[RMDB]
RNA sequence: GGGAACGACUCGAGUAGAGUCGAAAAGCAUUAAACCCCUCAAUGAAGAUGCUUAGACGUCCUUUAGGGGUUACUUCUGAGCAUGGCUUCAAGAGUCUUCCACGACUUCAUGUGACAGUUAUGUGAAUCCCCUAAAGCGAUUCGUCGCUUUAGGGGAAAAAGAAACAACAACAACAAC
Reactivity to DMS in 0.01 (KOAc 150mM, MgCl2 10mM, bicine 150mM(pH8.5), 24C), signal-to-noise 2, nucleotides 027 to 126: g010c080a080u000u000a070a110a150c030c020c000c030u000c110a110a070u000g010a080a080g020a030u000g010c000u000u000a060g000a100c140g010u000c000c020u000u000u010a040g010g030g000g020u000u000a020c080u000u000c070u010g030a170g000c010a020u010g010g030c020u000u000c060a060a130g010a020g000u000c040u000u000c130c090a100c180g000a040c040u000u000c060a090u000g000u020g000a040c170a090g030u000u010a010u000g000u000g010a110a090
Overview
Conditions: 150 mM KOAc, 10 mM MgCl2 and 150 mM bicine (pH 8.5), 24 C. The record gives the reactivity of an RNA of 177 nucleotides to DMS. Values cover nucleotides 27 to 126. For DMS, 1,110 sequencing reads were counted. It was measured as part of the RMDB library OK2TRN.